[RMDB]
RNA sequence: GGGAACGACUCGAGUAGAGUCGAAAAUUAGAAACAGUUCUGGAUUCCGUAUUCGGAAAAACUGUUCCGCAGACGCACGUCACUUACAGUGGCUAGAAAACAUUGGACGUUGUCCAGGGUAGUUACGUGACCAUAAUAGUUUCGACUAUUAUGGUCAAAAAGAAACAACAACAACAAC
Reactivity to DMS in 0.01 (KOAc 150mM, MgCl2 10mM, bicine 150mM(pH8.5), 24C), signal-to-noise 9, nucleotides 027 to 126: u030u040a100g010a130a030a030c020a030g010u010u000c080u020g000g000a120u010u010c100c070g010u020a140u010u020c010g010g000a030a060a060a080a110c030u000g000u000u000c020c010g020c120a070g000a080c130g010c120a090c150g010u000c000a030c050u010u030a160c170a090g010u000g000g000c010u010a100g000a120a080a090a070c090a050u020u020g000g010a020c030g010u030u020g000u000c000c040a040g010g000g010u000a050g010u010u000a060c150g010
Reactivity to 2A3 in 0.01 (KOAc 150mM, MgCl2 10mM, bicine 150mM(pH8.5), 24C), signal-to-noise 8, nucleotides 027 to 126: u140u060a030g090a020a070a010c020a000g020u030u020c050u100g120g060a120u080u000c040c060g050u150a220u090u220c030g000g030a000a000a020a050a030c020u010g020u020u010c010c020g090c040a030g020a140c030g030c050a020c080g010u000c010a010c020u090u210a080c050a100g010u010g020g000c010u060a040g190a030a080a010a010c040a070u030u050g030g020a010c180g170u110u180g020u080c010c010a010g040g050g000u060a090g020u040u030a040c140g040